[RMDB]
RNA sequence: GGGAACGACUCGAGUAGAGUCGAAAACAAACAUGUCUUCGGACAUGUUUGAAAAAAACCUUUGUGCGUGCAAGGCACCAUUAUCCCAUUGGGAUACUGUGGUCUGCUGAUGACCACGCACUCUGGUAAAAAAGUCCCUGACUUCGGUCAGGGACAAUCUUAGCAGUAUGUUCGCAUACUGCUAAGAAAAAGAAACAACAACAACAAC
Reactivity to 2A3 in 0.01 (KOAc 150mM, MgCl2 10mM, bicine 150mM(pH8.5), 24C), signal-to-noise 6, nucleotides 027 to 156: c000a000a000a000c000a000u000g000u000c000u070u080c300g090g010a000c000a000u000g000u000u000u000g000a030a000a000a000a000a000a000c010c000u020u000u000g010u000g000c010g000u000g010c040a120a210g000g000c010a010c000c000a010u040u020a010u030c000c050c170a250u200u300g010g000g020a010u040a070c120u130g020u030g050g010u100c120u090g000c010u020g060a260u130g030a060c070c020a000c000g000c000a000c000u000c000u010g020g020u120a130a100a030a010a010a030g030u020c030c000c000u000g000a010c010u040u090c300g070g000u000c000a000g020g000g000a000c000a000a000
Reactivity to DMS in 0.01 (KOAc 150mM, MgCl2 10mM, bicine 150mM(pH8.5), 24C), signal-to-noise 3, nucleotides 027 to 156: c020a000a000a030c000a010u000g010u000c000u000u020c300g000g000a020c000a010u000g010u000u010u010g000a000a000a080a130a120a110a060c000c000u000u000u000g020u000g020c000g010u000g010c020a110a300g020g010c010a120c000c000a020u000u000a010u000c000c000c000a300u000u000g050g020g010a040u000a010c300u000g000u000g020g000u010c120u010g010c040u000g020a190u000g000a160c300c010a010c000g000c000a000c020u000c040u020g020g010u000a000a040a050a070a090a150g010u000c000c000c000u010g020a040c000u000u010c300g040g000u000c000a010g010g010g010a000c010a000a010

Overview:
An RNA of 207 nucleotides, treated with 2A3 and DMS and read out base by base. The RNA was probed in 150 mM KOAc, 10 mM MgCl2 and 150 mM bicine (pH 8.5) at 24 C. Values cover nucleotides 27 to 156. For DMS the reverse transcriptase was MarathonRT. The data come from the RNA Mapping Database (RMDB), library RNAMAK.